Record summary:
This 177-nucleotide RNA was probed chemically with DMS and 2A3. The 2A3 profile rests on 1,282 reads. The data come from the RNA Mapping Database (RMDB), libraries RFM100 and RFMREP. Conditions: 150 mM KOAc, 10 mM MgCl2 and 150 mM bicine (pH 8.5), 24 C.

[RMDB]
RNA sequence: GGGAACGACUCGAGUAGAGUCGAAAAUUAGGUGCCUUUAAUUUGACAAAAGAAGAAUACGUAUCCAUUCAGUACUCCAGAGGGACUUGAAAACUGUUCUUCCCUGAACUAACGCUGGACUAUCAUGCAAGACGAACGUUUUCGAACGUUCGUCUUGAAAAGAAACAACAACAACAAC
Reactivity to DMS in 0.01 (KOAc 150mM, MgCl2 10mM, bicine 150mM(pH8.5), 24C), signal-to-noise 3, nucleotides 027 to 126: u000u000a010g000g000u010g000c020c000u020u000u050a060a130u010u010u000g000a100c130a080a070a090a130g000a130a030g000a070a030u010a040c100g010u020a220u060c060c060a180u030u010c020a050g020u010a100c100u010c040c060a090g010a120g000g010g000a030c070u030u000g000a030a030a080a090c100u000g010u000u000c040u000u010c010c010c040u000g060a040a040c120u000a020a040c130g010c020u000g010g000a040c070u000a020u010c120a080u010g040
Reactivity to 2A3 in 0.01 (KOAc 150mM, MgCl2 10mM, bicine 150mM(pH8.5), 24C), signal-to-noise 3, nucleotides 027 to 126: u130u050a050g100g020u060g050c000c000u110u090u150a130a030u000u090u170g160a070c130a060a210a020a010g070a010a090g030a080a020u070a070c050g030u050a050u050c000c010a020u080u080c020a000g030u050a030c030u000c060c040a070g030a060g040g010g000a060c040u110u140g100a050a010a060a010c070u090g000u040u010c000u000u030c050c000c000u000g040a050a010c000u000a120a000c080g040c100u030g000g000a040c000u050a090u220c030a000u090g040